The record gives the reactivity of an RNA of 177 nucleotides to DMS and 2A3. The DMS profile rests on 8,366 reads. For 2A3 the reverse transcriptase was SuperScript II with manganese. Values cover nucleotides 27 to 126.

RNA sequence: GGGAACGACUCGAGUAGAGUCGAAAAGAUAUGGAGCUCCAGAUCUUGGAUUUAGGAUCGGAAACGAUCCUUGUCAGAUCGGAGAACUACUCCUAAGUCAAAAGGUGGAGUGUUCGCACUCCACCAAGUAAGAAAACAUGUUCGCAUGUUUUCUUACAAAAGAAACAACAACAACAAC
Reactivity to DMS in 0.01 (KOAc 150mM, MgCl2 10mM, bicine 150mM(pH8.5), 24C), signal-to-noise 6, nucleotides 027 to 126: g000a050u010a300u000g000g000a020g010c030u010c000c010a140g010a010u000c000u000u000g020g010a010u000u000u000a010g010g000a010u010c010g010g000a100a100a200c000g010a000u000c000c000u000u000g000u000c030a050g000a020u000c000g000g000a030g000a040a030c070u020a300c010u000c000c010u000a080a170g000u010c040a110a080a090a120g010g020u000g000g000a020g020u000g010u000u010c240g010c010a010c000u000c000c000a000c000c000a000a020
Reactivity to 2A3 in 0.01 (KOAc 150mM, MgCl2 10mM, bicine 150mM(pH8.5), 24C), signal-to-noise 6, nucleotides 027 to 126: g020a000u080a040u200g010g000a010g040c030u020c030c110a160g020a030u020c020u150u300g210g010a060u300u300u210a010g000g010a000u010c010g020g030a030a040a000c010g000a010u000c000c040u000u010g000u000c010a000g000a010u010c020g010g000a010g010a010a010c020u140a040c000u000c000c000u030a110a050g070u050c030a030a060a070a110g010g000u010g000g010a010g000u020g040u050u200c300g040c100a000c000u000c000c000a000c000c000a000a000